[RMDB]
RNA sequence: GGGAACGACUCGAGUAGAGUCGAAAAAGGGUGUGAUACAGUCUGUUCUGCCUGCUGGUGAGUUCAGGAGCAUUGUACCAAAAGUGUAUUGUCUGGUCAAGAAUGGACAGAAUAGCUAGGGCACAUGUGAACAGAGAUAGUUCGCUAUCUCUGUUCAAAAAGAAACAACAACAACAAC
Reactivity to DMS in 0.01 (KOAc 150mM, MgCl2 10mM, bicine 150mM(pH8.5), 24C), signal-to-noise 7, nucleotides 027 to 126: a080g010g010g020u000g010u010g000a100u010a100c110a060g010u010c030u000g020u000u000c020u000g010c030c010u000g010c080u010g010g010u000g000a070g010u010u000c050a050g010g010a110g010c060a050u000u000g010u010a080c100c140a050a070a080a100g010u010g010u000a120u000u010g010u000c030u000g010g010u000c050a050a080g010a080a070u010g000g000a030c020a020g000a030a040u000a040g010c030u010a100g010g000g010c030a030c070a030u010g010
Reactivity to 2A3 in 0.01 (KOAc 150mM, MgCl2 10mM, bicine 150mM(pH8.5), 24C), signal-to-noise 4, nucleotides 027 to 126: a000g130g040g010u040g010u030g020a060u080a130c030a010g060u040c020u020g040u060u000c010u050g030c010c020u030g000c040u080g010g080u100g090a080g030u080u120c030a020g010g030a040g050c040a070u000u080g050u110a090c020c000a090a130a030a020g070u140g030u060a120u100u070g080u070c030u030g030g010u020c020a020a030g070a100a050u110g000g020a040c000a020g040a030a020u030a040g030c030u050a030g020g030g030c020a010c000a050u140g080
Structure probing data (DMS and 2A3) for a 177-nucleotide construct.
2A3 adducts were read by reverse transcription with SuperScript II with manganese.
For DMS the reverse transcriptase was MarathonRT.
Reactivities are given for positions 27 through 126.
The reactions ran in a buffer of 150 mM KOAc, 10 mM MgCl2 and 150 mM bicine (pH 8.5), at 24 C.